[RMDB]
RNA sequence: GGGAACGACUCGAGUAGAGUCGAAAAAUACACCAGCAGUAGGACUCAGCGACCGUCACAACAAGGUUGUGCUGGUAUCCGACGGUCGUAUAGCCCUGUCUUGCAGGUUGCCUUGCGCUGACGUGCCACACCAUUUACAGAUUCGUCUGUAAAUGAACAUUCAUGGAACUUUCGAGUUCCAUGAAUGAAAAGAAACAACAACAACAAC
Reactivity to 2A3 in 0.01 (KOAc 150mM, MgCl2 10mM, bicine 150mM(pH8.5), 24C), signal-to-noise 4, nucleotides 027 to 156: a010u140a030c050a010c010c000a000g000c010a020g020u160a010g000g010a020c010u010c050a010g000c000g010a000c010c000g010u010c020a050c060a200a150c050a220a110g030g030u000u030g030u050g030c020u030g000g020u010a030u030c030c040g000a000c000g000g000u000c000g000u020a030u060a040g010c000c020c000u020g020u050c080u060u150g020c040a030g050g010u090u100g040c020c020u080u130g010c030g010c050u040g040a030c070g050u060g020c020c030a110c020a030c050c010a000u000u000u010a000c010a000g010a000u020u110c150g070u010c090u010g000u010a000a010a010u000g000a020a020
Reactivity to DMS in 0.01 (KOAc 150mM, MgCl2 10mM, bicine 150mM(pH8.5), 24C), signal-to-noise 3, nucleotides 027 to 156: a110u010a070c050a170c030c020a070g040c010a050g030u000a030g000g010a040c000u010c090a200g000c000g000a040c000c000g010u010c030a190c090a130a110c130a100a130g030g020u000u000g000u000g030c000u000g000g040u000a070u000c070c040g030a030c010g020g010u000c010g000u000a110u010a030g010c020c010c000u000g000u000c050u000u020g000c020a150g020g020u000u010g040c010c100u010u000g010c040g020c090u020g020a120c090g000u010g020c030c030a120c030a090c050c010a020u000u000u010a010c000a010g010a090u000u000c300g010u000c000u000g010u000a010a010a000u010g020a070a200
An RNA of 207 nucleotides, treated with 2A3 and DMS and read out base by base. For DMS, 7,109 sequencing reads were counted. The 2A3 profile rests on 5,049 reads. The RNA was probed in 150 mM KOAc, 10 mM MgCl2 and 150 mM bicine (pH 8.5) at 24 C.